[RMDB]
RNA sequence: GGGAACGACUCGAGUAGAGUCGAAAAGGCGUCUUCGCUGCCUCGGCCGCCCUGCACUGACCGGUAGCCGCCGUAAUAGCGGCAUUGUUCCCAUAAAUGGAUGUGGGUGUGGGUGGCGAAGUAGCAGAGUCGAUAAUUAGUUCGCUAAUUAUCGACUAAAAGAAACAACAACAACAAC
Reactivity to DMS in 0.01 (KOAc 150mM, MgCl2 10mM, bicine 150mM(pH8.5), 24C), signal-to-noise 7, nucleotides 027 to 126: g010g010c080g010u000c040u000u000c080g010c010u000g010c010c000u000c080g030g020c040c020g010c010c010c000u000g030c030a030c040u000g010a110c050c040g010g030u010a140g020c010c010g020c000c040g000u010a130a100u020a100g000c000g000g010c010a100u010u000g000u000u000c000c000c020a130u010a050a090a120u010g010g010a130u000g020u000g010g010g020u000g010u000g010g000g020u000g010g020c000g000a010a020g010u000a100g030c020a150g000
Reactivity to 2A3 in 0.01 (KOAc 150mM, MgCl2 10mM, bicine 150mM(pH8.5), 24C), signal-to-noise 5, nucleotides 027 to 126: g100g020c040g080u030c030u080u050c050g010c000u010g000c010c000u030c020g170g050c020c010g000c010c010c020u040g020c030a030c060u080g090a070c010c040g010g020u040a040g010c000c000g000c000c010g020u050a060a040u110a130g010c000g000g000c000a010u040u160g020u040u010c020c000c000a030u150a030a160a050u180g050g030a050u100g030u080g100g010g050u040g000u070g010g010g000u020g000g000c000g000a000a000g000u040a010g000c020a010g000